This 177-nucleotide RNA was probed chemically with DMS and 2A3.

RNA sequence: GGGAACGACUCGAGUAGAGUCGAAAAAGCCUCCGUUACGACGGAGGCAUCGCGAUGAGGAAAUUCAUCACACACACACUCCGAAUUUUCGUGUAGAGAAUUAUUAAGAACGGAUAUCUGAGCGCAAUUGUACCUAGACUUUCGAGUCUAGGUACAAAAAAGAAACAACAACAACAAC
Reactivity to DMS in 0.01 (KOAc 150mM, MgCl2 10mM, bicine 150mM(pH8.5), 24C), signal-to-noise 3, nucleotides 027 to 126: a130g000c000c000u000c010c000g000u000u010a100c160g010a080c000g000g000a000g020g020c010a000u000c090g010c050g000a050u000g030a090g000g000a050a070a070u030u010c000a060u010c020a120c080a070c150a060c080a060c080a080c080u010c010c030g020a010a080u000u000u000u000c050g010u020g000u080a130g010a070g000a040a040u000u010a130u020u000a080a040g000a110a160c080g000g000a020u000a080u030c060u010g010a070g010c080g040c090a040a110
Reactivity to 2A3 in 0.01 (KOAc 150mM, MgCl2 10mM, bicine 150mM(pH8.5), 24C), signal-to-noise 4, nucleotides 027 to 126: a000g000c000c000u000c000c000g010u010u050a070c280g000a000c000g080g000a010g000g000c000a000u030c030g030c030g030a050u100g040a030g030g170a030a060a050u150u020c010a060u060c000a010c000a000c000a000c000a010c000a040c050u000c020c000g080a100a100u070u030u050u040c070g010u110g100u250a030g040a010g060a190a050u160u110a070u130u160a110a050g040a130a040c020g020g000a020u040a010u100c050u050g010a010g020c060g000c030a040a160
Conditions: 150 mM KOAc, 10 mM MgCl2 and 150 mM bicine (pH 8.5), 24 C. For DMS the reverse transcriptase was MarathonRT.